Background:
The data come from the RNA Mapping Database (RMDB), library OK2TST. Chemical mapping of a 177-nucleotide RNA with DMS and 2A3. The DMS profile rests on 1,479 reads. The RNA was probed in 150 mM KOAc, 10 mM MgCl2 and 150 mM bicine (pH 8.5) at 24 C.
[RMDB]
RNA sequence: GGGAACGACUCGAGUAGAGUCGAAAAAUCGAAACCAUCGAAUGGGACAGCGACUGGGAUAUGGAUUACGUUUGCGCGGCCUUCGGCAUCAGGAAAAGGCAUCUCAUCGAAGAUGGCGAGCCGACCAUAUCAUCACCGUUUUCGAACGGUGAUGAUAAAAAGAAACAACAACAACAAC
Reactivity to DMS in 0.01 (KOAc 150mM, MgCl2 10mM, bicine 150mM(pH8.5), 24C), signal-to-noise 2, nucleotides 027 to 126: a110u000c020g020a110a070a160c040c050a000u010c110g000a100a160u000g000g000g000a050c040a070g000c000g010a030c120u000g000g000g000a100u000a040u000g010g020a070u000u000a040c110g010u000u000u000g030c160g040c040g000g040c020c120u000u010c060g030g010c040a050u010c030a080g020g010a080a060a050a100g010g010c050a120u020c010u000c010a160u010c230g010a100a100g000a030u000g000g020c040g000a050g000c000c010g000a040c040c060a090
Reactivity to 2A3 in 0.01 (KOAc 150mM, MgCl2 10mM, bicine 150mM(pH8.5), 24C), signal-to-noise 1, nucleotides 027 to 126: a000u080c030g000a160a000a150c000c010a030u050c040g040a020a100u080g010g030g040a020c020a020g010c020g060a070c020u030g010g000g050a040u040a040u140g040g000a020u040u210a070c030g040u010u080u180g030c020g000c000g010g010c040c000u070u060c000g030g010c000a000u020c000a040g040g010a010a160a030a020g070g040c010a050u000c010u020c000a140u120c070g050a090a000g020a020u010g040g050c030g030a010g000c010c000g040a040c000c000a050